[RMDB]
Notes: The record gives the reactivity of an RNA of 207 nucleotides to 2A3 and DMS. Values cover nucleotides 27 to 156. For DMS, 3,611 sequencing reads were counted. The RNA was probed in 150 mM KOAc, 10 mM MgCl2 and 150 mM bicine (pH 8.5) at 24 C.
RNA sequence: GGGAACGACUCGAGUAGAGUCGAAAAGUAUCUGUUCGCAGAUACAAAACCUUUGUGAGUGGAGAUAAUGAACUACCUAGCGAAUACAGCCCAUUGGGCUGUAAACUAGGCAUUAUCGAUGAAACUCACUCUGGUAAAAUGCGCGGUUCGCCGCGCACCAAUAUUUAGUGUUCGCACUAAAUAUUGGAAAAGAAACAACAACAACAAC
Reactivity to 2A3 in 0.01 (KOAc 150mM, MgCl2 10mM, bicine 150mM(pH8.5), 24C), signal-to-noise 4, nucleotides 027 to 156: g000u000a010u000c000u010g050u070u080c250g040c080a000g000a000u000a000c000a000a150a000a000c000c000u020u020u010g000u010g000a010g000u010g000g020a010g000a010u010a000a000u020g040a090a120c090u070a080c140c000u010a010g010c040g150a060a030u030a030c010a000g010c000c010c110a300u200u300g000g000g010c000u000g000u000a000a000a010c000u000a000g000g000c000a000u010u010a000u000c000g050a070u010g000a000a000a010c000u000c000a010c000u000c000u010g010g000u040a070a050a070a080u100g000c000g000c000g050g000u060u060c220g040c090c000g000c000g000c000a000
Reactivity to DMS in 0.01 (KOAc 150mM, MgCl2 10mM, bicine 150mM(pH8.5), 24C), signal-to-noise 2, nucleotides 027 to 156: g050u000a020u000c010u010g020u000u000c300g070c070a020g010a020u010a020c000a070a080a210a080c000c010u000u030u000g000u010g010a030g000u000g020g010a150g030a040u010a010a040u010g010a150a220c080u000a210c000c000u000a030g000c000g020a180a160u000a050c010a010g000c000c000c020a300u000u000g060g030g040c000u000g020u050a000a040a020c030u000a010g020g020c000a040u000u000a030u000c000g000a100u000g010a220a120a070c000u000c000a000c000u000c000u000g010g000u000a040a000a080a130u000g040c010g020c010g000g000u000u000c210g050c030c000g000c030g060c010a020